An RNA of 177 nucleotides, treated with 2A3 and read out base by base. The 2A3 profile rests on 849 reads.

RNA sequence: GGGAACGACUCGAGUAGAGUCGAAAACGGUGAGCUUGGCCCUGCUCUACGCCUUCGCUCAUUUCGCUGGCGGGGUCACGCUGCCGCUGGGACUCGCGCUGCUGCUCGCCGGCAAGCUGCUGCUGGGCGCUCACGACGCUUUCGAGCGUCGUGAGCGAAAAGAAACAACAACAACAAC
Reactivity to 2A3 in 0.01 (KOAc 150mM, MgCl2 10mM, bicine 150mM(pH8.5), 24C), signal-to-noise 1, nucleotides 027 to 126: c000g020g050u200g180a030g050c010u030u080g020g000c000c060c000u030g000c010u100c080u050a130c180g000c010c040u130u160c090g000c020u050c120a110u110u190u150c090g000c040u020g010g000c160g020g020g020g000u030c010a010c020g000c000u010g000c010c000g000c010u090g000g120g090a110c010u060c060g040c010g010c060u100g020c010u010g000c000u030c060g080c040c060g000g030c040a050a050g050c110u160g000c000u000g010c020u040g000g020g070